[RMDB]
RNA sequence: GGGAACGACUCGAGUAGAGUCGAAAAGAUAUGGAUGUUUCCACGGGAGAUACACUCGGAAACGAGUGAAUAUCAUCGAUCGUGGGCAUCCUAAGUCAAAAGACAUGAGAGUUCGCUCUCAUGUCAAGCAACUAAAGAACUUCGGUUCUUUAGUUGCAAAAGAAACAACAACAACAAC
Reactivity to DMS in 0.01 (KOAc 150mM, MgCl2 10mM, bicine 150mM(pH8.5), 24C), signal-to-noise 2, nucleotides 027 to 126: g000a060u010a190u030g030g010a020u000g030u010u030u000c000c010a000c000g030g010g030a300g000a010u000a050c010a000c000u000c010g020g010a040a040a130c000g040a000g030u020g000a110a110u000a050u020c090a190u010c270g020a300u020c000g030u000g000g000g010c000a010u000c000c000u000a020a060g040u000c010a160a030a120a150g010a000c000a000u000g000a020g000a000g000u000u020c300g010c000u000c000u010c000a000u010g020u000c010a030a060
Reactivity to 2A3 in 0.01 (KOAc 150mM, MgCl2 10mM, bicine 150mM(pH8.5), 24C), signal-to-noise 2, nucleotides 027 to 126: g010a000u070a030u110g000g000a000u000g060u020u300u210c020c010a000c000g050g100g080a120g010a010u010a040c010a000c000u000c000g000g000a050a070a010c000g010a000g010u000g000a090a050u100a050u040c110a030u210c140g160a110u060c000g000u010g020g000g010c010a010u010c000c000u010a070a000g030u000c010a040a040a090a230g010a020c000a000u000g000a000g000a000g010u080u230c300g050c120u000c010u030c000a000u000g010u010c000a010a000
This 177-nucleotide RNA was probed chemically with DMS and 2A3.
The RNA was probed in 150 mM KOAc, 10 mM MgCl2 and 150 mM bicine (pH 8.5) at 24 C.
The data come from the RNA Mapping Database (RMDB), library TTRDES.
The 2A3 profile rests on 3,512 reads.
DMS adducts were read by reverse transcription with MarathonRT.